[RMDB]
RNA sequence: GGGAACGACUCGAGUAGAGUCGAAAAUGCCAGGUUGUGAUGGCGGUAGUUUGUAUGUUAACAAGCACGCUUUUCAUACACCAGCAUAUGAUGUGAGUGCAUUCCGUGAUCUGAAACCUUUACCAUUAUACUUUUAGGUUCGCCUAAAAGAAAAGAAACAACAACAACAAC
Reactivity to 2A3 in 0.01 (KOAc 150mM, MgCl2 10mM, bicine 150mM(pH8.5), 24C), signal-to-noise 9, nucleotides 027 to 129: u040g000c000c010a030g010g000u010u010g010u010g000a010u010g010g000c000g010g040u100a130g010u030u020u020g080u030a130u110g300u130u210a170a020c010a010a010g000c000a000c020g000c000u240u210u060u030c000a010u010a010c030a000c020c000a000g000c010a000u030a100u150g110a070u080g060u040g060a030g030u060g020c010a030u140u010c040c040g070u060g010a050u000c010u040g040a070a060a080c020c000u080u110u070a090c050c020a030u100u090a100u160a180
Reactivity to DMS in 0.01 (KOAc 150mM, MgCl2 10mM, bicine 150mM(pH8.5), 24C), signal-to-noise 9, nucleotides 027 to 129: u000g020c000c030a060g030g020u000u000g030u000g020a000u000g000g010c030g010g000u050a060g000u010u000u000g030u030a110u030g040u090u070a130a030c000a020a030g040c010a090c000g030c030u060u070u040u020c000a020u030a050c080a040c020c010a140g000c030a020u040a040u010g030a060u050g020u030g000a070g030u020g020c050a090u000u000c060c090g040u000g000a040u000c020u000g020a090a060a070c080c060u020u040u040a130c080c050a080u040u020a110u070a120

An RNA of 170 nucleotides, treated with 2A3 and DMS and read out base by base. Reactivities are given for positions 27 through 129. The reactions ran in a buffer of 150 mM KOAc, 10 mM MgCl2 and 150 mM bicine (pH 8.5), at 24 C. The 2A3 profile rests on 67,265 reads. 2A3 adducts were read by reverse transcription with SuperScript II with manganese. For DMS the reverse transcriptase was MarathonRT. The data come from the RNA Mapping Database (RMDB), library 15KLIB.